Chemical mapping of a 177-nucleotide RNA with DMS and 2A3. The DMS profile rests on 1,017 reads. For 2A3 the reverse transcriptase was SuperScript II with manganese.
RNA sequence: GGGAACGACUCGAGUAGAGUCGAAAAGAUAUGGAAUGCCUACCCACCGAAUGCCGAUGAAACUUCUCGGAAACGAGAAGUGGAGGCACGAGGGCAUUCCUAAGUCAAAGCGAGGUUCGCCUCGCAAUCAAGCCUAUGACUUCGGUCAUAGGCUUGAAAAAGAAACAACAACAACAAC
Reactivity to DMS in 0.01 (KOAc 150mM, MgCl2 10mM, bicine 150mM(pH8.5), 24C), signal-to-noise 2, nucleotides 027 to 126: g020a070u000a110u010g000g000a050a010u000g060c010c020u020a190c070c010c060a300c120c070g000a090a060u010g000c020c000g000a140u020g050a190a160a010c000u000u000c000u000c000g000g000a060a040a070c020g020a000g010a020a000g010u000g000g010a020g010g010c000a020c090g010a240g000g000g010c000a010u000u000c000c000u000a020a140g000u020c110a070a130a100g010c000g010a000g020g000u000u010c300g010c000c010u000c000g010c000a020a040
Reactivity to 2A3 in 0.01 (KOAc 150mM, MgCl2 10mM, bicine 150mM(pH8.5), 24C), signal-to-noise 1, nucleotides 027 to 126: g000a020u140a070u150g000g000a000a000u010g060c000c000u050a170c090c000c030a250c060c110g140a300a240u250g000c000c010g210a300u020g010a030a030a000c000u010u000c000u000c030g030g020a000a030a020c000g000a000g010a000a000g000u010g010g000a000g000g000c040a000c090g010a110g040g030g000c030a000u010u000c000c000u000a000a020g040u050c110a210a100a050g000c000g020a000g030g000u060u130c190g130c080c000u000c000g000c000a000a000

The data come from the RNA Mapping Database (RMDB), library TTRDEL.
Values cover nucleotides 27 to 126.
Conditions: 150 mM KOAc, 10 mM MgCl2 and 150 mM bicine (pH 8.5), 24 C.